[RMDB]
RNA sequence: GGGAACGACUCGAGUAGAGUCGAAAAGAACCCCCAAGCUUUCAACAGAGGAAGAGAGCAAGAUAGAGGAGCCCCCGUGACGCUGGCAGCAUCGCGGACUGGGAGAAGAGAGGCGAAGAAAAGAAGGCGUACAUAGUUAGUUCGCUAACUAUGUACGAAAAGAAACAACAACAACAAC
Reactivity to 2A3 in 0.01 (KOAc 150mM, MgCl2 10mM, bicine 150mM(pH8.5), 24C), signal-to-noise 1, nucleotides 027 to 126: g010a020a080c040c000c000c010c000a040a060g030c060u050u160u060c040a120a110c030a060g090a040g160g000a060a030g030a010g000a000g000c040a000a030g070a070u120a020g100a020g060g000a040g010c000c000c000c010c030g000u010g010a000c000g000c020u020g050g040c030a000g000c000a020u020c020g020c010g000g000a000c010u010g030g000g020a040g000a070a010g030a010g010a030g020g010c030g030a040a040g030a040a100a010a010g060a020a000g060g030
Reactivity to DMS in 0.01 (KOAc 150mM, MgCl2 10mM, bicine 150mM(pH8.5), 24C), signal-to-noise 3, nucleotides 027 to 126: g010a180a130c150c060c000c020c080a150a160g000c060u000u010u010c040a090a190c110a080g010a040g030g010a060a100g000a020g000a050g010c060a110a050g000a110u010a040g020a060g000g010a120g010c040c040c070c000c020g020u010g010a030c070g030c030u010g010g010c170a110g010c020a030u000c040g010c010g000g000a090c130u000g000g010g020a110g010a070a060g010a020g000a040g010g010c080g000a020a100g000a040a070a060a070g020a060a070g010g010